[RMDB]
RNA sequence: GGGAACGACUCGAGUAGAGUCGAAAAGAUAUGGAGUACUGGUUGAACAGCAACAGCUCUCUCGGAAACGAGAGAGACAUGCUGAAACUUACUCCUAAGUCAAAACUAAGUACUUCGGUACUUAGAAGUAUGUAAUCUUCUUCGGAAGAUUACAUACAAAAGAAACAACAACAACAAC
Reactivity to DMS in 0.01 (KOAc 150mM, MgCl2 10mM, bicine 150mM(pH8.5), 24C), signal-to-noise 5, nucleotides 027 to 126: g010a080u000a300u010g000g020a020g020u000a010c300u010g010g010u000u000g010a200a150c040a010g000c010a030a090c300a150g000c010u000c000u010c000u000c000g010g010a130a100a250c000g020a010g000a010g000a010g000a000c100a090u000g010c010u000g030a070a030a030c010u000u000a010c010u000c000c000u010a060a150g010u000c050a060a070a150a200c000u010a000a000g010u000a010c000u000u030c190g030g020u000a000c000u000u000a010g000a100a110
Reactivity to 2A3 in 0.01 (KOAc 150mM, MgCl2 10mM, bicine 150mM(pH8.5), 24C), signal-to-noise 5, nucleotides 027 to 126: g020a020u100a060u150g020g000a010g020u060a110c220u150g160g070u110u080g150a300a090c000a010g010c010a020a100c020a250g020c020u000c000u000c010u000c010g060g000a080a100a080c010g010a010g010a000g010a000g020a010c000a040u040g000c000u000g000a010a020a000c000u030u030a010c000u000c000c000u010a140a030g030u020c040a020a000a120a180c000u000a000a000g000u000a000c000u040u170c300g130g000u010a010c000u000u010a000g000a060a020

Description:
An RNA of 177 nucleotides, treated with DMS and 2A3 and read out base by base. The RNA was probed in 150 mM KOAc, 10 mM MgCl2 and 150 mM bicine (pH 8.5) at 24 C.